This 177-nucleotide RNA was probed chemically with DMS and 2A3. The DMS profile rests on 3,382 reads. Conditions: 150 mM KOAc, 10 mM MgCl2 and 150 mM bicine (pH 8.5), 24 C. 2A3 adducts were read by reverse transcription with SuperScript II with manganese.

RNA sequence: GGGAACGACUCGAGUAGAGUCGAAAAUAACAGGAGAGUAGAUGAUUCGCGUUAACUGUGUGUGAAUGGGAUGUCGUCACACAACGAAGCGAGAGCGCGGUGAAUCAUUGCAUCCGCUCCAAAACAAGAAGAAGCAAAAGUUCGCUUUUGCUUCUUCAAAAGAAACAACAACAACAAC
Reactivity to DMS in 0.01 (KOAc 150mM, MgCl2 10mM, bicine 150mM(pH8.5), 24C), signal-to-noise 4, nucleotides 027 to 126: u000a080a150c200a130g010g010a010g000a020g010u000a300g000a020u000g000a010u000u000c000g010c030g030u010u020a060a080c110u010g020u000g030u010g010u000g000a050a080u000g010g010g010a020u000g010u000c270g010u000c000a010c010a000c020a010a050c090g000a180a100g010c010g010a180g010a140g010c010g020c090g000g060u000g000a010a010u000c020a020u000u010g000c030a030u000c010c010g000c000u000c000c010a070a040a070a110c200a060a080
Reactivity to 2A3 in 0.01 (KOAc 150mM, MgCl2 10mM, bicine 150mM(pH8.5), 24C), signal-to-noise 2, nucleotides 027 to 126: u110a020a020c030a030g010g010a000g010a010g020u040a000g000a010u000g000a000u020u000c010g020c010g040u060u090a060a030c040u040g000u000g000u000g000u010g050a030a030u010g000g000g000a010u030g030u090c070g010u010c020a010c000a000c010a050a130c040g050a050a010g010c010g030a080g020a020g100c020g020c020g020g030u010g020a010a000u000c000a000u020u020g000c000a010u000c000c000g010c000u000c000c010a020a090a020a030c050a040a070

DMS adducts were read by reverse transcription with MarathonRT. Source: RMDB library M2PK90, as collected in RNAgym.